[RMDB]
Source: RMDB library 15KLIB, as collected in RNAgym. Chemical mapping of a 170-nucleotide RNA with DMS and 2A3.
RNA sequence: GGGAACGACUCGAGUAGAGUCGAAAAAAUCAACCUCCAUGGUUUCCUGCCUGGGCCUCUUCGCCGGGGGCGCUCCGUCUUCGUUCUUCUUCCUUCUCAACAGUCCGACGAUGUUUCCCAGCCAGGGUAAGUGGACGCUUCGGCGUCCACAAAAGAAACAACAACAACAAC
Reactivity to DMS in 0.01 (KOAc 150mM, MgCl2 10mM, bicine 150mM(pH8.5), 24C), signal-to-noise 3, nucleotides 027 to 129: a100a040u040c120a160a120c010c030u030c110c020a130u030g020g020u020u010u040c010c060u030g000c170c040u030g000g000g000c080c080u000c090u000u000c000g000c000c080g210g000g000g020g010c120g000c080u020c040c070g050u030c030u000u010c110g040u060u000c000u020u050c000u010u000c020c020u030u040c030u040c060a110a210c110a060g030u030c080c020g010a030c010g020a100u010g000u030u020u030c000c080c000a080g000c080c060a060g000g020g030u030a110a130
Reactivity to 2A3 in 0.01 (KOAc 150mM, MgCl2 10mM, bicine 150mM(pH8.5), 24C), signal-to-noise 2, nucleotides 027 to 129: a000a000u200c080a010a010c000c030u040c050c020a090u100g060g000u020u000u040c020c020u000g060c000c000u010g000g000g030c040c010u060c030u070u040c090g080c050c020g000g000g000g000g000c000g040c030u030c020c000g070u030c050u000u000c020g030u000u000c000u030u000c000u020u070c040c020u050u000c070u000c000a040a210c020a050g040u040c000c000g000a050c030g000a020u080g000u010u020u000c000c000c000a000g000c000c000a000g040g020g020u040a070a000

Conditions: 150 mM KOAc, 10 mM MgCl2 and 150 mM bicine (pH 8.5), 24 C. The DMS profile rests on 5,235 reads.